[RMDB]
Structure probing data (DMS and 2A3) for a 177-nucleotide construct.
RNA sequence: GGGAACGACUCGAGUAGAGUCGAAAACACGUCGGCAUGCGAAUACCAGAUUUACAGAAGCGUUCUUGGGGUACACGAGGACGUGGUGCAGCUGUGGGAGAUGUGUAGCGAUCACGUGUACUUUAAAGUUUUAACCACGAUUCGUCGUGGUUAAAACAAAAGAAACAACAACAACAAC
Reactivity to DMS in 0.01 (KOAc 150mM, MgCl2 10mM, bicine 150mM(pH8.5), 24C), signal-to-noise 2, nucleotides 027 to 126: c080a090c090g040u010c070g010g030c060a070u000g000c010g030a150a080u000a090c080c040a100g000a130u000u000u000a070c060a060g000a100a120g010c040g000u000u000c000u010u000g000g010g010g000u010a040c040a030c010g000a060g010g000a050c040g010u010g010g040u010g010c070a030g000c020u010g030u010g010g000g020a070g040a060u000g010u000g000u010a210g010c040g010a070u020c050a040c050g000u030g010u020a050c020u010u010u000a070a100a110
Reactivity to 2A3 in 0.01 (KOAc 150mM, MgCl2 10mM, bicine 150mM(pH8.5), 24C), signal-to-noise 1, nucleotides 027 to 126: c070a010c030g030u030c040g040g030c050a040u080g030c020g080a110a020u080a120c030c030a030g070a150u110u160u080a060c060a010g040a150a000g090c020g060u000u030c000u000u020g050g000g000g120u080a010c050a020c030g030a070g000g050a010c020g000u000g000g070u110g000c010a020g010c000u040g000u100g090g100g020a100g000a080u040g040u010g020u020a000g070c020g080a090u040c010a000c020g030u030g020u020a070c000u040u130u160a110a060a010